Annotation:
The record gives the reactivity of an RNA of 177 nucleotides to 2A3. It was measured as part of the RMDB library OK1LIB.

RNA sequence: GGGAACGACUCGAGUAGAGUCGAAAAGAAUUGGUAUGUAAGCUACCUCUUCCGGUAGCUGCGUCACACUUUAAGAGUGUGCAUACUGAGCCGAAGCUCAGCUUCGGUCCCCCAAGGGAAGAUCAAACGGUGCUCACCAGUUCGCUGGUGAGCACCGAAAAGAAACAACAACAACAAC
Reactivity to 2A3 in 0.01 (KOAc 150mM, MgCl2 10mM, bicine 150mM(pH8.5), 24C), signal-to-noise 1, nucleotides 027 to 126: g200a070a070u000u000g000g000u000a010u000g000u000a000a040g040c000u000a000c000c000u030c000u010u020c020c000g000g000u000a000g010c000u000g010c000g000u010c000a000c000a000c000u050u160u300a230a250g130a040g200u000g000u000g020c000a000u000a000c000u000g000a000g020c000c000g000a000a000g000c030u100c300a100g000c000u000u030c000g000g050u000c000c000c000c000c050a010a100g050g000g000a000a000g000a040u140c050a010a010a010
About this RNA
The reactions ran in a buffer of 150 mM KOAc, 10 mM MgCl2 and 150 mM bicine (pH 8.5), at 24 C. For 2A3 the reverse transcriptase was SuperScript II with manganese.